The record gives the reactivity of an RNA of 207 nucleotides to 2A3.

RNA sequence: GGGAACGACUCGAGUAGAGUCGAAAAGAUCAGACCAGAGUGACUGGUGGAGCACUUGCCCCAGCCCAGAAAGGAUGUGGUCGGGUUGAGAAAAUCCGCUCUGGGCCACUCAUGCUAAUGGAAUGUCAGCAGCUGCAAAGGUACAGCCUGCCUUUGGGGGAUUGUACAACUUCGGUUGUACAAUCCCAAAAGAAACAACAACAACAAC
Reactivity to 2A3 in 0.01 (KOAc 150mM, MgCl2 10mM, bicine 150mM(pH8.5), 24C), signal-to-noise 1, nucleotides 027 to 156: g050a060u160c050a070g050a070c000c000a000g020a010g150u160g040a050c010u020g050g050u170g110g000a060g000c140a080c130u070u160g050c050c000c000c010a000g040c000c000c000a050g030a150a090a010g170g050a120u140g070u010g070g000u030c110g000g010g000u040u140g030a050g010a120a170a010a030u010c000c030g060c050u060c000u000g000g010g020c010c000a000c000u030c010a050u120g000c000u190a190a030u040g020g030a210a100u100g060u110c030a040g000c010a000g010c010u060g000c060a080a000a050g080g000u110a030c010a020g030c010c000u010g000c000c000u050u000u000g050g010
The 2A3 profile rests on 457 reads. Conditions: 150 mM KOAc, 10 mM MgCl2 and 150 mM bicine (pH 8.5), 24 C. For 2A3 the reverse transcriptase was SuperScript II with manganese. Values cover nucleotides 27 to 156.